[RMDB]
RNA sequence: GGGAACGACUCGAGUAGAGUCGAAAAAGGUCAUGAUCAUCCUGAAAAAAUUGCCCUAAGGCUUGGGUGAGGAAUUGGGUCCUGAAAUUGCACGGUGCACUUCACAGUCCAGGAUUGAAUCUGGAUGGUCUCUUCAUGUGUUCGCACAUGAAGAGACAAAAGAAACAACAACAACAAC
Reactivity to 2A3 in 0.01 (KOAc 150mM, MgCl2 10mM, bicine 150mM(pH8.5), 24C), signal-to-noise 1, nucleotides 027 to 126: a030g130g010u070c070a070u080g150a040u020c000a030u000c020c020u030g060a180a000a000a000a000a030u060u090g000c000c020c000u070a090a080g140g040c010u050u090g000g000g000u050g030a030g000g040a030a060u140u110g040g010g050u050c050c010u080g030a080a100a090u040u100g000c020a010c070g010g030u040g000c050a010c030u050u050c050a020c020a030g030u000c030c020a010g000g010a070u130u180g070a090a050u030c020u030g020g000a010u020g000
Reactivity to DMS in 0.01 (KOAc 150mM, MgCl2 10mM, bicine 150mM(pH8.5), 24C), signal-to-noise 2, nucleotides 027 to 126: a090g000g010u000c030a060u010g010a150u010c050a060u010c010c020u000g000a000a030a100a100a150a150u000u000g010c040c010c060u010a150a090g000g020c080u000u000g000g000g020u000g020a050g040g030a100a070u000u010g010g010g010u010c030c010u000g010a030a070a060u000u000g020c060a100c050g010g000u010g000c190a110c140u030u000c050a090c150a120g020u000c020c000a010g010g010a070u000u010g020a050a130u000c000u000g000g000a030u000g000

The data come from the RNA Mapping Database (RMDB), library OK2TST. Structure probing data (2A3 and DMS) for a 177-nucleotide construct. The RNA was probed in 150 mM KOAc, 10 mM MgCl2 and 150 mM bicine (pH 8.5) at 24 C. Reactivities are rounded to 0.1 and cut off at 0 and 3. As a SHAPE reagent, 2A3 marks flexible, mostly unpaired nucleotides at the ribose 2'-OH. The DMS profile rests on 1,257 reads.